[RMDB]
RNA sequence: GGGAACGACUCGAGUAGAGUCGAAAAUGAUUUUAUGGAAAAGAUAGGCAAAUCCAUUACGACUAAAGAAGCGAGCGACAAGAAAAAUGUCAACGAUACUGAUGCCAAUGUCGACGACGUUGAAAAUCAUCGUUACAAACUGUACGACGAAUUUUACUCCACUUAGAAACUUCGGUUUCUAAGUGGAAAAAGAAACAACAACAACAAC
Reactivity to DMS in 0.01 (KOAc 150mM, MgCl2 10mM, bicine 150mM(pH8.5), 24C), signal-to-noise 1, nucleotides 027 to 156: u000g020a160u000u000u000u000a080u000g020g030a110a120a110a130g010a100u000a090g020g010c000a100a080a050u000c050c040a080u000u010a110c150g000a160c050u010a070a090a210g000a070a090g010c040g000a030g040c020g040a090c050a020a060g030a040a040a130a060a080u000g000u000c050a000a170c060g000a110u000a100c070u020g000a190u000g000c130c030a120a030u020g000u000c000g040a210c130g030a020c050g030u000u000g000a100a040a020a030u000c010a040u000c050g050u000u000a180c020a040a080a240c050u000g000u020a050c000g000a040c010g000a020a050u020u010u000u000a040c070
Reactivity to 2A3 in 0.01 (KOAc 150mM, MgCl2 10mM, bicine 150mM(pH8.5), 24C), signal-to-noise 2, nucleotides 027 to 156: u080g030a050u030u040u060u150a050u040g010g000a040a040a050a040g010a010u090a090g040g000c010a050a060a060u000c000c000a000u010u050a050c020g080a030c070u110a040a050a220g010a120a030g010c000g040a010g000c060g040a020c040a050a050g040a080a090a010a000a020u090g010u080c030a030a000c040g010a000u020a100c040u130g120a030u020g020c020c000a010a020u020g020u020c000g000a080c030g000a000c000g000u010u050g030a080a070a010a010u080c000a000u010c040g010u030u000a000c030a040a050a000c020u030g000u040a010c000g010a000c040g080a010a080u300u300u300u300a040c040